[RMDB]
RNA sequence: GGGAACGACUCGAGUAGAGUCGAAAAACUCAUCAGCGCGUACGCGCGCUGAUGAGAUGGGCAGACUGAAAAAGGUGAAUCGUGACAAGCUAGUUGGUGACGAUUCACCUUCUUCAGUCUGCCCUAAUCCAUUUACGAAAUUCGUUUCGUAAAUGGAAAAAGAAACAACAACAACAAC
Reactivity to 2A3 in 0.01 (KOAc 150mM, MgCl2 10mM, bicine 150mM(pH8.5), 24C), signal-to-noise 2, nucleotides 027 to 126: a010c010u010c000a000u010c000a000g000c010g000c000g030u040a060c180g000c000g010c010g000c140u000g000a000u000g000a000g000a000u010g000g000g000c000a000g000a000c000u000g000a000a000a000a010a000g000g000u010g000a000a000u010c000g000u050g100a030c000a060a030g140c090u240a110g230u160u160g180g010u090g060a000c000g000a000u000u000c000a000c000c000u000u000c000u000u000c000a000g000u000c000u000g000c000c000c000u000a000a000
Reactivity to DMS in 0.01 (KOAc 150mM, MgCl2 10mM, bicine 150mM(pH8.5), 24C), signal-to-noise 4, nucleotides 027 to 126: a110c000u000c000a010u000c000a010g010c010g040c000g020u000a070c240g030c030g020c010g020c000u000g000a000u000g000a000g000a020u000g000g010g010c000a010g000a020c000u000g000a010a010a010a010a010g000g000u000g010a010a000u000c000g010u000g000a020c000a040a120g010c220u020a130g020u020u010g010g000u000g000a010c000g000a010u000u000c000a000c000c000u000u000c000u000u000c000a000g010u000c000u000g000c010c000c000u000a000a040